[RMDB]
RNA sequence: GGGAACGACUCGAGUAGAGUCGAAAAACCUCUAAGUUCGCUUAGAGGUAAUGAACGCUGCAAAAAGCACCGCGCUCAGCGGAGCACGCAAAAGCAACGCAAGAACACCAUUCUUCGGAAUGGUGAACGUCAAGAUUGGAUUCGUCCAAUCUUGACGAAAAGAAACAACAACAACAAC
Reactivity to 2A3 in 0.01 (KOAc 150mM, MgCl2 10mM, bicine 150mM(pH8.5), 24C), signal-to-noise 2, nucleotides 027 to 126: a000c000c000u000c000u000a000a010g010u020u140c180g030c130u000u000a020g000a010g010g000u020a020a040u120g030a070a000c020g000c060u020g000c020a030a010a000a020a180g000c000a020c000c030g000c000g030c030u270c170a010g000c010g040g010a010g020c020a020c130g030c040a050a070a010a080g010c010a000a020c040g040c050a070a030g070a110a000c000a000c000c000a010u000u000c010u030u060c290g060g010a000a010u000g000g000u010g010a030a010
Reactivity to DMS in 0.01 (KOAc 150mM, MgCl2 10mM, bicine 150mM(pH8.5), 24C), signal-to-noise 2, nucleotides 027 to 126: a040c000c000u000c010u000a000a000g020u010u010c200g030c010u000u000a000g000a010g000g000u000a020a020u000g010a100a130c050g000c000u000g020c070a040a070a130a170a110g010c040a050c040c000g020c020g010c190u000c190a130g010c000g010g000a030g020c020a090c270g010c110a050a030a130a100g000c000a010a020c030g010c110a050a070g010a060a190c020a010c000c000a000u000u000c000u000u030c140g000g010a000a000u000g000g010u000g000a030a030